[RMDB]
RNA sequence: GGGAACGACUCGAGUAGAGUCGAAAAGGGAGAGCCGAGCAGAGGCAUAGCGAACUGCGCACGGCGAAGCCUUGAGGGAAAGCCGUAGGACCCGGGUUCGAUUCCCGGCUGCUCCACCGAAGGGCCACCAGUGCUAUCGUUUCGACGAUAGCACUGGAAAAGAAACAACAACAACAAC
Reactivity to 2A3 in 0.01 (KOAc 150mM, MgCl2 10mM, bicine 150mM(pH8.5), 24C), signal-to-noise 2, nucleotides 027 to 126: g070g010g000a120g010a000g010c000c010g030a010g000c010a000g020a060g090g020c120a110u170a050g100c100g030a090a070c030u030g000c040g010c060a090c050g020g000c000g020a010a000g030c020c000u020u060g030a090g000g010g000a010a060a030g030c040c030g080u100a060g050g100a100c010c000c000g010g000g000u050u080c060g010a030u040u080c000c000c000g000g000c000u050g000c010u000c030c010a050c000c020g020a020a040g010g000g010c000c000a010
Reactivity to DMS in 0.01 (KOAc 150mM, MgCl2 10mM, bicine 150mM(pH8.5), 24C), signal-to-noise 4, nucleotides 027 to 126: g020g000g010a080g020a300g010c000c010g030a120g020c030a030g000a100g000g000c080a100u030a100g010c060g010a170a120c010u010g000c000g010c130a100c040g000g010c010g000a110a300g000c010c000u000u000g010a300g000g000g000a070a130a160g000c000c060g020u050a080g000g010a080c130c000c000g020g010g000u000u020c210g000a260u040u030c020c000c000g000g000c080u010g020c070u020c010c030a190c070c030g030a220a120g000g020g010c010c090a150
Conditions: 150 mM KOAc, 10 mM MgCl2 and 150 mM bicine (pH 8.5), 24 C. Structure probing data (2A3 and DMS) for a 177-nucleotide construct. For DMS the reverse transcriptase was MarathonRT.